[RMDB]
Source: RMDB library OK1LIB, as collected in RNAgym.
This 177-nucleotide RNA was probed chemically with DMS and 2A3.
RNA sequence: GGGAACGACUCGAGUAGAGUCGAAAAGAAGUGCGGUCGUACCCGAGCACAAGGACGUUCAUCUGAUUGUUUUCAAAGAUGUUCGUCCGAUUACACUUGACGGCUGUUAUGUCACGUCUUGUGGAGAGGGUAGGAGCUCGUUCGCGAGUUCCUACCCAAAAGAAACAACAACAACAAC
Reactivity to DMS in 0.01 (KOAc 150mM, MgCl2 10mM, bicine 150mM(pH8.5), 24C), signal-to-noise 2, nucleotides 027 to 126: g000a120a100g020u040g040c070g000g000u010c110g020u020a090c000c010c010g000a090g000c080a050c130a130a110g010g000a000c010g000u020u000c000a020u010c000u000g010a160u010u010g010u010u050u030u030c100a070a140a010g040a000u010g000u000u000c000g000u000c000c010g010a030u040u020a070c000a010c000u000u000g030a000c020g000g000c020u000g010u010u010a070u030g010u020c050a110c030g000u000c010u000u000g000u000g000g030a130g020a130
Reactivity to 2A3 in 0.01 (KOAc 150mM, MgCl2 10mM, bicine 150mM(pH8.5), 24C), signal-to-noise 7, nucleotides 027 to 126: g160a110a020g030u070g030c040g020g080u100c040g030u060a070c000c000c000g000a030g010c030a040c030a080a070g000g000a000c000g000u000u000c000a000u000c000u030g090a120u110u110g200u200u120u120u130c040a080a080a020g000a000u000g000u010u000c000g000u000c000c000g000a010u000u050a010c000a000c010u020u010g010a010c000g020g020c060u040g200u300u200a190u280g080u120c100a010c210g000u000c000u010u010g000u020g030g040a130g010a030
Reactivities are given for positions 27 through 126. 2A3 adducts were read by reverse transcription with SuperScript II with manganese.